[RMDB]
RNA sequence: GGGAACGACUCGAGUAGAGUCGAAAAGACCAAUAACAGAAUGCACCACAGCGUAAAAUCAUCUGAUUGGGUGAGUUGGUCGCACCGCCAUUUGACUAACGAACGCCAAGCCUAAGCCGUCUUUGUGAACACGAGCUAGUCUUCGGACUAGCUCGAACUUAAUCUCACACUUCGGUGUGAGAUUAAGAAAAGAAACAACAACAACAAC
Reactivity to DMS in 0.01 (KOAc 150mM, MgCl2 10mM, bicine 150mM(pH8.5), 24C), signal-to-noise 1, nucleotides 027 to 156: g020a190c020c060a120a100u000a030a210c050a210g030a080a040u020g010c060a060c010c030a070c050a110g000c010g060u010a100a030a070a090u010c070a060u010c010u000g020a130u010u020g010g000g000u010g040a140g070u000u000g010g040u010c020g050c070a100c030c040g010c070c010a210u000u000u040g010a070c020u020a050a090c110g000a050a050c090g010c050c000a030a100g000c070c010u030a070a100g010c000c030g000u000c030u000u000u000g000u010g000a090a080c060a160c030g030a040g010c030u000a010g040u000c030u000u000c280g050g030a060c000u000a030g020c000u000c020g000a000a040
Reactivity to 2A3 in 0.01 (KOAc 150mM, MgCl2 10mM, bicine 150mM(pH8.5), 24C), signal-to-noise 3, nucleotides 027 to 156: g030a000c000c030a030a060u150a060a010c030a040g100a140a160u110g050c000a010c030c030a020c020a050g040c040g090u110a070a060a030a030u070c040a030u040c050u120g090a160u100u150g070g000g010u030g010a060g040u040u020g040g010u020c020g000c040a050c050c010g030c020c000a040u090u060u130g050a040c010u030a080a030c060g040a020a020c030g040c050c020a090a040g000c000c020u060a040a020g000c020c000g040u040c020u060u050u110g120u030g050a050a030c060a030c140g000a000g000c000u000a000g000u000c000u000u030c180g060g000a010c010u000a000g000c000u000c000g000a000a000